[RMDB]
RNA sequence: GGGAACGACUCGAGUAGAGUCGAAAAAGAUCGGCCUGUCGCUUGCGGUAUUCGGAAUCUUGCACGCCCUCGCUCAAGCCUUCGUCACUCCAAACGUUUCGGCGAGAAGCAGGCCAUUAUCGCCGGCGGACAGACUUACUUUCGAGUAAGUCUGUCCAAAAGAAACAACAACAACAAC
Reactivity to DMS in 0.01 (KOAc 150mM, MgCl2 10mM, bicine 150mM(pH8.5), 24C), signal-to-noise 2, nucleotides 027 to 126: a050g000a090u000c120g020g020c010c000u000g020u000c120g020c030u010u000g010c080g030g000u010a060u000u010c140g000g010a110a100u000c040u000u020g010c070a070c030g000c070c080c040u000c060g000c070u020c090a040a120g000c070c050u000u000c060g010u000c070a090c060u000c060c110a070a060a060c150g000u000u000u010c080g010g010c010g010a040g000a050a100g000c040a050g000g000c010c040a070u000u000a100u000c070g000c000c010g000g010c290
Reactivity to 2A3 in 0.01 (KOAc 150mM, MgCl2 10mM, bicine 150mM(pH8.5), 24C), signal-to-noise 1, nucleotides 027 to 126: a000g050a040u070c040g070g000c000c000u030g030u040c070g020c080u030u090g040c030g000g060u080a160u030u070c030g040g040a090a080u040c030u070u070g030c000a000c050g050c040c000c010u030c010g050c020u030c030a040a050g030c000c030u060u020c030g050u020c020a040c130u040c020c020a110a070a060c070g030u030u090u070c030g040g000c010g000a000g030a010a010g020c020a000g050g010c000c000a030u050u060a020u020c040g030c040c000g020g000c090